[RMDB]
RNA sequence: GGGAACGACUCGAGUAGAGUCGAAAACUCGGACAUCAUCAAGCCCGACCGGAUAAUUACAGAAGACGGGCUACUCACUCUUUCUUCUGAUAUCGCAACAGGGAAAGGGAAAUCAUUCAAUAAGUUAUCGAUGAAUUUCUCCAGAUAAUCCGCAUCGCGAACUAUAACCAUUCGUGGUUAUAGUUCGAAAAGAAACAACAACAACAAC
Reactivity to 2A3 in 0.01 (KOAc 150mM, MgCl2 10mM, bicine 150mM(pH8.5), 24C), signal-to-noise 8, nucleotides 027 to 156: c030u020c030g010g020a020c030a070u080c010a020u030c050a100a020g020c010c000c020g030a050c030c040g020g030a050u060a190a120u250u170a110c050a050g070a050a010g020a060c020g010g010g000c010u020a020c030u060c030a060c000u030c010u060u160u010c010u260u050c010u010g050a070u040a050u200c110g020c140a080a110c010a080g000g000g050a020a030a020g030g010g000a020a030a010u070c030a020u230u100c050a070a110u150a240a040g100u150u130a100u190c050g000a010u020g030a070a120u030u080u020c030u020c010c010a010g010a070u080a080a070u060c020c040g010c090a080u130c060g010
Reactivity to DMS in 0.01 (KOAc 150mM, MgCl2 10mM, bicine 150mM(pH8.5), 24C), signal-to-noise 2, nucleotides 027 to 156: c060u010c010g050g050a050c020a160u000c060a100u010c100a160a210g020c040c000c000g010a090c080c040g040g010a110u010a060a070u000u000a280c040a040g000a080a090g000a100c300g000g030g010c030u000a040c170u010c100a090c020u000c000u000u000u000c020u000u000c020u000g000a140u010a110u000c080g030c040a120a090c050a210g000g020g020a030a080a040g020g000g000a000a030a060u010c020a080u000u010c040a030a110u000a020a130g000u000u000a050u020c030g000a080u000g010a090a140u000u000u000c010u000c010c030a110g010a110u000a060a120u020c050c030g000c060a140u000c050g010